[RMDB]
Structure probing data (DMS and 2A3) for a 177-nucleotide construct. For 2A3, 1,539 sequencing reads were counted. The reactions ran in a buffer of 150 mM KOAc, 10 mM MgCl2 and 150 mM bicine (pH 8.5), at 24 C. For DMS the reverse transcriptase was MarathonRT.
RNA sequence: GGGAACGACUCGAGUAGAGUCGAAAAAACAAUGAAGUCUAUAAAAAGGAUUGGAUUGUGCAUAAGUCUGUUGAUUUUAAUCAUUUUUGCAACAUCUUGUGGUAGUAAUAAGAUUACUGGAGACUCACAUUAGGUGGAUGUUCGCAUCCACCUAAUGAAAAGAAACAACAACAACAAC
Reactivity to DMS in 0.01 (KOAc 150mM, MgCl2 10mM, bicine 150mM(pH8.5), 24C), signal-to-noise 4, nucleotides 027 to 126: a100a020c040a020a030u010g000a090a070g000u000c010u010a090u070a070a070a050a140a120g010g000a030u010u000g000g000a070u000u010g000u010g000c040a070u010a050a020g010u010c140u000g000u000u000g000a030u000u000u010u010a040a050u040c090a120u010u010u000u000u010g010c030a030a040c020a030u020c040u010u010g020u000g000g000u010a020g000u010a010a020u000a050a060g000a300u000u000a020c060u000g000g000a040g000a160c040u000c060a210
Reactivity to 2A3 in 0.01 (KOAc 150mM, MgCl2 10mM, bicine 150mM(pH8.5), 24C), signal-to-noise 3, nucleotides 027 to 126: a000a010c130a040a050u190g040a100a000g020u000c020u060a270u110a130a130a090a040a020g000g040a030u060u120g070g040a060u070u060g010u040g020c000a020u010a020a050g020u010c190u050g050u010u050g050a110u040u070u140u190a040a120u040c110a130u000u070u050u090u160g000c020a010a000c000a050u000c000u020u040g010u020g040g040u050a040g010u020a000a060u040a150a040g070a120u020u070a080c040u030g010g040a050g000a000c020u000c040a060